[RMDB]
Annotation
This 177-nucleotide RNA was probed chemically with DMS and 2A3. Reactivities are given for positions 27 through 126. Conditions: 150 mM KOAc, 10 mM MgCl2 and 150 mM bicine (pH 8.5), 24 C.
RNA sequence: GGGAACGACUCGAGUAGAGUCGAAAAGCUGCCACAAUCCAUUGUGCAUACGGUUUUACUUCUUUGACUUCAGAAACGUAUAUAUGGUUUGAUUUUUUUGCUAAUUCAGAUUCAUUUACAUUUAAAAACUAUGACUGCUAUUCGUAGCAGUCAUAGUAAAAGAAACAACAACAACAAC
Reactivity to DMS in 0.01 (KOAc 150mM, MgCl2 10mM, bicine 150mM(pH8.5), 24C), signal-to-noise 2, nucleotides 027 to 126: g000c060u000g010c040c020a120c020a070a070u010c080c080a060u000u000g010u000g030c110a170u000a040c050g010g010u000u000u000u000a070c060u010u000c020u000u010u010g000a120c050u010u010c070a070g020a030a060a050c070g000u000a010u000a060u010a050u010g000g010u000u000u000g010a010u000u000u000u000u020u000u020g010c110u010a030a050u010u000c020a010g000a040u000u010c020a030u000u000u000a040c040a120u000u000u020a050a040a100a080
Reactivity to 2A3 in 0.01 (KOAc 150mM, MgCl2 10mM, bicine 150mM(pH8.5), 24C), signal-to-noise 2, nucleotides 027 to 126: g030c020u080g120c020c000a030c030a050a070u060c040c030a060u030u050g040u070g080c030a010u030a030c010g030g050u000u000u100u060a050c000u040u070c040u130u040u110g070a090c030u030u030c070a010g120a100a080a010c040g040u000a040u010a010u010a010u110g000g000u000u000u030g040a050u040u010u000u000u040u100u200g040c030u060a030a010u060u020c010a010g050a040u100u110c000a020u000u060u170a050c010a000u170u250u250a100a160a070a020